[RMDB]
RNA sequence: GGGAACGACUCGAGUAGAGUCGAAAAGUCCCGGAGUUCGCUCCGGGACAAAGAACCUCAAAUUGACGCUAACUUCCGCGUCAUCGCGAGGAAACGAGGAAAAAAUCACGGAGUUCGCUCCGUGAAACACAUCUGAUUACUUCGGUAAUCAGAUGUGAAAAGAAACAACAACAACAAC
Reactivity to DMS in 0.01 (KOAc 150mM, MgCl2 10mM, bicine 150mM(pH8.5), 24C), signal-to-noise 3, nucleotides 027 to 126: g000u000c000c000c000g020g010a020g020u000u000c230g010c010u000c020c000g000g000g000a000c020a010a010a100g000a180a180c000c000u000c010a020a300a050u000u000g020a000c000g020c010u000a090a160c250u010u010c220c200g010c000g010u000c000a000u000c120g010c300g000a050g000g000a060a070a070c210g010a120g000g020a000a040a050a060a080a040u000c020a000c000g010g000a030g010u000u010c180g010c000u000c000c000g000u000g000a000a040a120
Reactivity to 2A3 in 0.01 (KOAc 150mM, MgCl2 10mM, bicine 150mM(pH8.5), 24C), signal-to-noise 2, nucleotides 027 to 126: g000u010c000c000c000g010g000a010g000u090u180c160g020c120u000c000c000g000g000g000a000c000a000a010a000g010a010a080c000c000u000c010a040a040a040u050u010g010a000c000g000c020u060a140a120c140u300u070c120c070g010c020g000u020c000a010u010c020g000c010g020a000g020g000a060a080a060c070g060a160g120g000a070a120a000a010a000a070u030c010a000c000g000g010a010g000u060u080c130g040c090u050c010c000g010u000g000a000a020a000

Background: Conditions: 150 mM KOAc, 10 mM MgCl2 and 150 mM bicine (pH 8.5), 24 C. Structure probing data (DMS and 2A3) for a 177-nucleotide construct. For DMS, 1,601 sequencing reads were counted. Source: RMDB library M2PK50, as collected in RNAgym.